[RMDB]
RNA sequence: GGGAACGACUCGAGUAGAGUCGAAAAAUCGCAAGACAAUCCACUGAUUAUAUUGAAAAAUGGAGUGGUAAAGUACAAUGACCGCCCUAUUUUGCAUAACCUGAGCUGGCGGGUAAAUCCAGGCGAGAUAACUAACCAUCUUCGGAUGGUUAGUUAUAAAAGAAACAACAACAACAAC
Reactivity to DMS in 0.01 (KOAc 150mM, MgCl2 10mM, bicine 150mM(pH8.5), 24C), signal-to-noise 3, nucleotides 027 to 126: a080u000c030g030c140a110a060g000a050c090a100a130u000c010c000a070c120u010g000a090u010u000a080u020a090u000u010g000a030a010a020a030a020u000g010g000a020g010u000g000g000u010a030a060a140g010u020a090c300a100a120u000g000a030c020c020g020c010c010c010u010a000u000u000u000u000g000c030a030u000a050a100c040c030u010g010a100g020c040u000g010g000c070g000g020g000u000a010a070a090u000c010c030a060g030g020c060g010a090g000
Reactivity to 2A3 in 0.01 (KOAc 150mM, MgCl2 10mM, bicine 150mM(pH8.5), 24C), signal-to-noise 1, nucleotides 027 to 126: a000u030c010g010c010a010a060g050a060c020a070a080u030c030c010a050c070u020g010a040u060u200a160u070a030u220u100g040a030a000a000a020a000u060g000g020a020g000u020g020g030u070a120a040a060g100u090a060c120a100a150u160g090a040c000c000g000c010c000c000u020a090u000u010u010u080g000c000a000u020a130a070c000c020u040g010a040g080c010u030g030g000c050g000g000g050u040a080a130a030u070c010c000a030g040g040c020g000a100g070
An RNA of 177 nucleotides, treated with DMS and 2A3 and read out base by base. The DMS profile rests on 2,523 reads. For 2A3 the reverse transcriptase was SuperScript II with manganese. The reactions ran in a buffer of 150 mM KOAc, 10 mM MgCl2 and 150 mM bicine (pH 8.5), at 24 C. Source: RMDB library OK2TRN, as collected in RNAgym.